[RMDB]
RNA sequence: GGGAACGACUCGAGUAGAGUCGAAAAGAGUAUAUCGCAGCUGAGCGCGUUAAGUUCGAUGCUUUGAAGCUGAUCAAAAGAGGUGUCGGGGGAGAUGAAUUCACUAUGUCGUUGGACGUCUGUACGAAUUAUCGGGAGUAUUCGUACUCCCGAUAAUAAAAGAAACAACAACAACAAC
Reactivity to DMS in 0.01 (KOAc 150mM, MgCl2 10mM, bicine 150mM(pH8.5), 24C), signal-to-noise 7, nucleotides 027 to 126: g000a100g020u010a100u000a090u010c080g010c020a030g030c040u000g000a070g020c080g020c040g010u000u000a080a130g020u000u000c060g010a080u000g020c030u000u000u010g010a090a060g010c020u010g000a080u020c110a070a040a090a110g010a070g000g010u000g020u000c050g010g000g010g000g010a100g000a060u000g000a060a080u000u000c060a050c080u010a070u000g010u000c030g010u000u000g000g010a080c110g000u000c070u000g000u010a090c130g010a110
Reactivity to 2A3 in 0.01 (KOAc 150mM, MgCl2 10mM, bicine 150mM(pH8.5), 24C), signal-to-noise 1, nucleotides 027 to 126: g020a010g060u040a040u020a000u270c040g040c070a010g010c010u040g000a010g020c020g030c030g050u070u040a060a070g030u090u060c050g020a110u060g000c000u130u020u030g070a050a000g000c010u030g010a060u070c030a020a090a060a000g070a010g040g010u050g000u060c050g000g030g000g000g000a030g010a020u060g020a040a090u080u060c010a010c090u060a110u190g060u090c030g030u060u020g010g020a000c030g020u010c050u070g100u040a090c090g040a030